Structure probing data (2A3 and DMS) for a 177-nucleotide construct. For 2A3 the reverse transcriptase was SuperScript II with manganese.
[RMDB]
RNA sequence: GGGAACGACUCGAGUAGAGUCGAAAAGAGCGAUACGUUUAUCAUCACGUUGCAUCGUCAGCUUCAGGAUGAUGAAGCAGAAGUAGACUGUUGCUGUUGAUGCUUCGUGUACUUCUGCGUAUCGCAAGGGAAUUGAUAAGUUCGCUUAUCAAUUCCCAAAAGAAACAACAACAACAAC
Reactivity to 2A3 in 0.01 (KOAc 150mM, MgCl2 10mM, bicine 150mM(pH8.5), 24C), signal-to-noise 4, nucleotides 027 to 126: g080a010g000c000g000a000u000a000c000g010u020u040u060a000u000c020a000u020c000a000c010g000u000u000g000c000a000u010c020g300u090c010a000g000c000u000u000c000a010g020g040a040u030g000a000u000g040a060a050g080c030a020g000a050a000g040u020a010g010a040c000u010g000u000u000g000c000u010g030u120u200g000a000u000g000c000u000u010c000g000u000g030u000a000c000u010u030c000u010g000c000g000u010a000u000c000g000c000a000a000
Reactivity to DMS in 0.01 (KOAc 150mM, MgCl2 10mM, bicine 150mM(pH8.5), 24C), signal-to-noise 2, nucleotides 027 to 126: g010a180g000c010g010a000u000a000c010g000u000u000u000a000u000c030a110u050c000a010c010g000u000u000g000c000a020u000c010g000u040c030a010g020c000u010u000c000a000g020g000a080u010g000a050u000g000a030a130g030c100a000g050a010a050g040u010a080g000a080c010u000g000u000u000g020c000u010g010u060u070g000a010u000g000c010u010u000c020g010u000g020u020a000c050u000u000c020u000g010c000g000u000a000u000c000g020c000a060a050
Source: RMDB library OK1LIB, as collected in RNAgym. The reactions ran in a buffer of 150 mM KOAc, 10 mM MgCl2 and 150 mM bicine (pH 8.5), at 24 C.